[RMDB]
RNA sequence: GGGAACGACUCGAGUAGAGUCGAAAACAAAUAUUUGGACCCAUAACUCUUAUCAUGAGGGUAGACACAGAAGGUCAUAGACGGUCCACAGGACUUUGAUAUAUUUCUGGGAAGGGAUGAUGAAUUGCAUCAUGGACAUCUUCGGAUGUCCAUGAUGAAAAGAAACAACAACAACAAC
Reactivity to 2A3 in 0.01 (KOAc 150mM, MgCl2 10mM, bicine 150mM(pH8.5), 24C), signal-to-noise 1, nucleotides 027 to 126: c000a020a100a050u160a120u170u100u090g020g000a040c030c000c010a070u110a050a030c000u000c030u080u100a140u290c000a150u280g000a000g000g000g050u050a050g000a000c110a000c000a150g150a190a020g000g010u030c020a010u080a050g140a040c100g020g010u000c050c030a090c080a170g030g080a010c020u150u090u050g070a010u020a000u000a040u090u090u020c030u080g020g060g020a010a030g070g030g010a050u060g030a000u050g100a040a090u270u280g000
Reactivity to DMS in 0.01 (KOAc 150mM, MgCl2 10mM, bicine 150mM(pH8.5), 24C), signal-to-noise 2, nucleotides 027 to 126: c050a110a110a130u010a090u000u000u000g020g020a110c010c020c100a160u000a180a110c050u010c000u000u000a100u000c170a060u020g000a050g010g000g010u000a060g010a130c070a020c040a100g000a060a040g010g000u000c050a070u000a100g020a180c130g000g000u000c010c020a140c240a080g010g010a030c060u000u000u000g000a040u000a030u010a100u000u000u000c020u000g010g000g000a090a050g000g000g000a040u000g010a070u000g010a110a100u010u000g020
An RNA of 177 nucleotides, treated with 2A3 and DMS and read out base by base. For 2A3, 657 sequencing reads were counted. DMS adducts were read by reverse transcription with MarathonRT. For 2A3 the reverse transcriptase was SuperScript II with manganese. Values cover nucleotides 27 to 126. The data come from the RNA Mapping Database (RMDB), library OK2TRN.